[RMDB]
RNA sequence: GGGAACGACUCGAGUAGAGUCGAAAAGUCCUGGGCGAGACAUGAGAAGUCUGUCUUCGCUUAGGUACGGCAAUGGUACCACACGACGCACCUUGUGUCGUUGUGUGGUUUUCGCAUGCUCCUUCCGCUGAAGGGGAGUUUCAUCCAGCACAGCAGGCGGUACUUGAAACUUCGGUUUCAAGUACCGAAAAGAAACAACAACAACAAC
Reactivity to 2A3 in 0.01 (KOAc 150mM, MgCl2 10mM, bicine 150mM(pH8.5), 24C), signal-to-noise 1, nucleotides 027 to 156: g010u030c000c000u000g020g000g030c000g010a010g000a000c040a110u300g030a040g090a290a030g190u000c020u040g030u000c000u180u130c110g000c000u010u040a000g000g030u140a010c000g000g000c000a000a060u050g000g000u020a000c000c000a000c000a000c010g000a000c000g010c080a010c000c160u200u290g080u130g030u200c020g000u000u070g000u000g010u000g000g000u010u000u040u000c000g000c000a000u030g020c010u020c010c040u070u030c020c010g040c000u030g040a130a090g040g010g030g010a030g050u000u180u180c050a040u000c000c000a030g080c110a040c000a040g070c010a010g070g000
The record gives the reactivity of an RNA of 207 nucleotides to 2A3. The data come from the RNA Mapping Database (RMDB), library ARCHII. The 2A3 profile rests on 731 reads. The reactions ran in a buffer of 150 mM KOAc, 10 mM MgCl2 and 150 mM bicine (pH 8.5), at 24 C.